Chemical mapping of a 177-nucleotide RNA with 2A3 and DMS. Conditions: 150 mM KOAc, 10 mM MgCl2 and 150 mM bicine (pH 8.5), 24 C. Reactivities are given for positions 27 through 126. For 2A3 the reverse transcriptase was SuperScript II with manganese. DMS adducts were read by reverse transcription with MarathonRT. For DMS, 25,121 sequencing reads were counted.
RNA sequence: GGGAACGACUCGAGUAGAGUCGAAAAUGGAAGGUUUUGGCUUAGCAAUUUUAGAGUCGCUUUCAGUAGGUACACCAGUGAUCAGUUAUGAUAUAGAUUAUGGGCCAUCAGAACUGAUUCAAGAUGGCAGUUCUAUAGUGUUCGCACUAUAGAACUGAAAAGAAACAACAACAACAAC
Reactivity to 2A3 in 0.01 (KOAc 150mM, MgCl2 10mM, bicine 150mM(pH8.5), 24C), signal-to-noise 9, nucleotides 027 to 126: u120g050g060a040a050g150g010u030u050u140u130g040g000c010u040u030a050g060c100a170a250u090u070u100u170a130g000a010g010u010c020g020c100u020u020u000c020a060g050u090a050g030g150u080a050c050a030c040c010a040g050u020g080a010u000c010a010g010u040u030a030u060g040a020u020a020u060a190g130a110u100u200a090u300g070g070g000c030c020a000u010c000a000g030a050a020c010u030g020a050u120u120c030a040a030g080a100u040g030g000
Reactivity to DMS in 0.01 (KOAc 150mM, MgCl2 10mM, bicine 150mM(pH8.5), 24C), signal-to-noise 8, nucleotides 027 to 126: u020g010g020a070a090g010g010u000u000u010u010g010g010c010u010u000a180g010c110a120a080u030u030u050u020a150g000a020g020u000c010g020c070u000u000u000c010a090g000u020a060g000g010u020a070c090a110c030c030a060g000u020g010a030u000c000a020g000u010u010a040u010g000a030u020a140u020a100g010a120u020u030a070u020g010g010g010c060c060a030u000c000a030g010a030a030c050u010g010a040u020u020c070a070a110g020a060u010g010g010